Chemical mapping of a 177-nucleotide RNA with 2A3 and DMS. The reactions ran in a buffer of 150 mM KOAc, 10 mM MgCl2 and 150 mM bicine (pH 8.5), at 24 C. The data come from the RNA Mapping Database (RMDB), library TTRDES.
RNA sequence: GGGAACGACUCGAGUAGAGUCGAAAAGAUAUGGACAUAUCUAGGACUCGAAGAACUAAUUCGGAAACGAAUUAGGGAGAGUACUAGAGUAUGUCCUAAGUCAAAAGCGACUGCUUCGGCAGUCGCAGCAUGAUAAGAACUUCGGUUCUUAUCAUGCAAAAGAAACAACAACAACAAC
Reactivity to 2A3 in 0.01 (KOAc 150mM, MgCl2 10mM, bicine 150mM(pH8.5), 24C), signal-to-noise 2, nucleotides 027 to 126: g030a030u080a060u150g000g000a000c010a010u020a000u000c010u010a010g000g030a020c000u040c000g200a300a040g010a050a010c010u010a010a000u000u000c010g010g040a060a110a060c010g010a000a020u000u000a000g010g000g010a020g000a020g000u030a020c000u020a010g020a010g020u030a010u000g000u010c000c000u000a080a010g070u030c050a040a010a090a160g010c010g020a000c000u000g030c000u050u100c220g160g030c000a000g000u000c010g000c000a000
Reactivity to DMS in 0.01 (KOAc 150mM, MgCl2 10mM, bicine 150mM(pH8.5), 24C), signal-to-noise 3, nucleotides 027 to 126: g010a030u000a300u000g000g000a020c000a010u000a010u000c000u000a010g010g000a010c010u000c040g000a130a190g000a170a180c010u000a000a000u000u000c000g010g010a120a140a200c010g000a010a010u000u000a010g000g000g020a050g000a010g040u000a010c000u000a020g020a050g010u000a000u010g010u000c000c000u000a010a110g000u030c030a110a080a130a190g020c000g000a000c010u000g020c000u000u010c270g030g010c020a000g000u000c000g020c000a000